[RMDB]
RNA sequence: GGGAACGACUCGAGUAGAGUCGAAAAACAAAAUCAGUUUUCAUUAUGAUGAGCUUGAUUACAUUAGCGACUUAUUCUUCGUUAGCAAAUGCAAGUUUAAGUACUAAAGCGGCAACACCAAACCAAACCACUUUGUUAGAUUCGUCUAACAAAGUGGAAAAGAAACAACAACAACAAC
Reactivity to 2A3 in 0.01 (KOAc 150mM, MgCl2 10mM, bicine 150mM(pH8.5), 24C), signal-to-noise 3, nucleotides 027 to 126: a000c050a010a100a020a020u040c020a010g020u000u080u120u060c030a030u030u300a130u300g250a040u010g000a010g010c010u100u130g060a020u050u090a040c040a080u080u090a010g050c060g170a050c040u030u050a040u030u020c010u000u030c020g060u020u080a080g100c110a100a110a130u110g010c020a020a000g000u000u030u060a020a000g010u000a020c030u040a060a070a020g060c070g060g020c000a010a030c030a010c020c040a050a050a030c030c020a090a100a030
Reactivity to DMS in 0.01 (KOAc 150mM, MgCl2 10mM, bicine 150mM(pH8.5), 24C), signal-to-noise 2, nucleotides 027 to 126: a080c120a060a100a070a050u000c030a040g000u010u000u010u000c020a060u000u010a110u020g010a090u000g020a040g020c020u000u000g010a040u000u000a060c150a130u010u000a030g000c070g020a040c010u000u010a060u000u010c010u010u000c020g000u000u000a140g030c190a070a020a020u010g010c120a060a020g000u000u000u010a030a020g020u000a070c010u000a010a010a060g010c040g000g000c050a020a030c030a080c070c050a040a100a140c080c050a030a100a230